[RMDB]
RNA sequence: GGGAACGACUCGAGUAGAGUCGAAAAUCAAAAUAGUGGUGUUUUUUCAAAAAUUCUUCUGCGACGACAGCAGGUUCUUUACCUUUACCAUCCGCUUCAUAAUUCAAGCGUUGCAUCUCUGAAGUCGAACAAUAAACACAUUCGUGUGUUUAUUGUUAAAAGAAACAACAACAACAAC
Reactivity to 2A3 in 0.01 (KOAc 150mM, MgCl2 10mM, bicine 150mM(pH8.5), 24C), signal-to-noise 3, nucleotides 027 to 126: u070c020a090a010a050a110u220a100g060u040g080g000u020g000u070u110u040u070u080u080c080a090a070a020a100a100u140u000c050u070u000c020u050g060c010g090a060c020g010a010c040a020g010c040a010g010g000u020u040c020u040u100u080a100c020c010u060u080u060a070c000c000a040u040c020c010g060c040u070u040c060a100u070a300a090u270u090c110a060a000g010c020g060u050u050g010c040a070u040c030u000c010u070g050a070a020g040u070c040g010
Reactivity to DMS in 0.01 (KOAc 150mM, MgCl2 10mM, bicine 150mM(pH8.5), 24C), signal-to-noise 6, nucleotides 027 to 126: u010c040a080a090a080a090u010a090g020u000g000g020u000g000u000u000u010u010u010u020c060a050a070a070a090a100u010u010c040u000u000c040u010g000c030g020a100c090g010a120c090a090g000c150a030g010g000u000u010c080u010u010u000a060c040c020u010u000u000a090c090c030a060u000c070c040g010c010u000u000c080a060u010a050a120u010u000c150a040a100g000c070g010u000u000g010c060a060u000c060u000c040u010g010a060a150g010u010c100g000
The record gives the reactivity of an RNA of 177 nucleotides to 2A3 and DMS.
For 2A3 the reverse transcriptase was SuperScript II with manganese.
DMS adducts were read by reverse transcription with MarathonRT.
Conditions: 150 mM KOAc, 10 mM MgCl2 and 150 mM bicine (pH 8.5), 24 C.
The 2A3 profile rests on 2,279 reads.
It was measured as part of the RMDB library OK2TST.